RNA sequence: GGGAACGACUCGAGUAGAGUCGAAAAGAUAUGGAGAGAGCUUUUGACGGUCUGGGCUCGGAAACGAGCCUCUAAGACCGAUAAGCUCCUCCUAAGUCAAACGGAUCUGCCUUCGGGCAGAUCCGAACCAUUCAUGUAGGUUCGCCUACAUGAAUGGAAAAGAAACAACAACAACAAC
Reactivity to DMS in 0.01 (KOAc 150mM, MgCl2 10mM, bicine 150mM(pH8.5), 24C), signal-to-noise 3, nucleotides 027 to 126: g000a030u000a280u000g010g000a000g000a140g020a010g020c000u000u010u000u000g010a160c060g010g000u000c000u020g000g000g000c000u000c010g000g010a030a040a130c000g020a020g010c010c000u020c130u010a110a030g000a010c010c000g010a020u000a000a000g000c000u000c010c000u000c000c000u000a020a060g010u000c030a080a110a250c010g000g010a010u000c000u000g010c000c000u000u020c280g010g020g000c010a000g000a000u000c000c000g000a030a070
Reactivity to 2A3 in 0.01 (KOAc 150mM, MgCl2 10mM, bicine 150mM(pH8.5), 24C), signal-to-noise 3, nucleotides 027 to 126: g020a020u070a040u130g010g000a030g020a010g010a010g010c020u080u080u150u250g300a190c080g000g000u000c020u070g020g000g010c010u000c000g000g000a020a020a010c010g000a000g000c040c010u010c010u040a050a020g000a000c010c000g000a000u000a000a000g000c000u000c000c010u000c000c000u010a060a020g040u010c030a080a060a090c010g010g000a000u010c000u010g010c030c010u080u200c300g050g010g000c000a000g000a000u000c000c000g000a000a000